[RMDB]
RNA sequence: GGGAACGACUCGAGUAGAGUCGAAAAACUUUAUUGGCAGACUCAAGAAAUCAAGUAUCGAGAUACUCUGAUUGAUUUUUACCUGCACUUAGUUAAGUGUGUGGCUCACCGCCUAAUUUCAGGUAUGACCGAAGACCUUAUUCGUAAGGUCUUCGGUAAAAGAAACAACAACAACAAC
Reactivity to DMS in 0.01 (KOAc 150mM, MgCl2 10mM, bicine 150mM(pH8.5), 24C), signal-to-noise 2, nucleotides 027 to 126: a050c080u010u000u000a070u030u000g020g000c040a070g000a080c060u000c140a080a040g010a100a040a030u000c010a090a040g000u000a020u000c200g020a160g000a090u000a010c030u000c090u000g000a010u020u010g010a100u000u000u000u000u000a100c030c000u000g010c010a020c070u000u000a140g000u000u000a030a050g020u000g000u000g020u000g000g030c090u000c100a060c090c060g010c150c000u010a020a080u000u000u000c080a010g040g000u000a020u010g000
Reactivity to 2A3 in 0.01 (KOAc 150mM, MgCl2 10mM, bicine 150mM(pH8.5), 24C), signal-to-noise 1, nucleotides 027 to 126: a000c040u130u110u140a110u170u150g100g000c010a010g050a130c030u060c220a040a070g080a040a090a000u060c000a030a010g000u010a010u060c240g050a210g010a160u020a010c010u050c110u050g030a050u000u000g050a100u040u070u080u110u180a020c020c020u000g030c050a010c030u060u060a030g170u080u170a030a000g000u000g010u000g020u070g040g000c030u060c030a050c050c040g000c000c010u030a040a070u200u150u020c060a000g080g040u010a120u200g060